RNA sequence: GGGAACGACUCGAGUAGAGUCGAAAAUCGGACCUUGCAUCCUUAACCGGUUGGUGCAGUUUGUCAAAGAUAGAAUAUCCGUCGUGCAGACUUUAGUGCUAACCCAGCAACACCAACGCCUGGGGCAACUCCCUUCACAUUUCGAUGUGAAGGGAGUAAAAGAAACAACAACAACAAC
Reactivity to 2A3 in 0.01 (KOAc 150mM, MgCl2 10mM, bicine 150mM(pH8.5), 24C), signal-to-noise 6, nucleotides 027 to 126: u110c000g020g020a020c020c010u010u040g030c030a090u060c010c000u060u100a090a090c030c010g050g010u030u050g010g020u020g030c030a060g010u020u070u040g080u040c060a110a110a020g040a020u120a060g140a130a100u170a100u130c080c030g020u080c040g030u120g030c010a000g010a040c000u060u150u170a120g040u050g040c020u030a060a090c000c010c030a000g000c010a020a040c020a020c070c020a060a020c030g040c020c050u030g000g000g000g000c000a010
Reactivity to DMS in 0.01 (KOAc 150mM, MgCl2 10mM, bicine 150mM(pH8.5), 24C), signal-to-noise 4, nucleotides 027 to 126: u030c060g000g000a110c060c060u010u010g010c050a120u030c010c030u020u050a120a110c060c080g010g000u000u000g010g100u000g000c160a040g010u000u010u010g010u020c050a090a190a090g010a050u020a070g020a140a150u020a070u010c010c010g010u000c110g020u030g010c050a040g000a020c050u010u000u020a060g000u000g000c050u020a050a100c050c060c050a100g000c000a090a120c090a090c040c040a040a100c080g000c100c000u000g010g010g000g000c100a090
Structure probing data (2A3 and DMS) for a 177-nucleotide construct. For DMS, 4,735 sequencing reads were counted. It was measured as part of the RMDB library OK1LIB. Reactivities are given for positions 27 through 126. The 2A3 profile rests on 4,716 reads. DMS adducts were read by reverse transcription with MarathonRT. For 2A3 the reverse transcriptase was SuperScript II with manganese.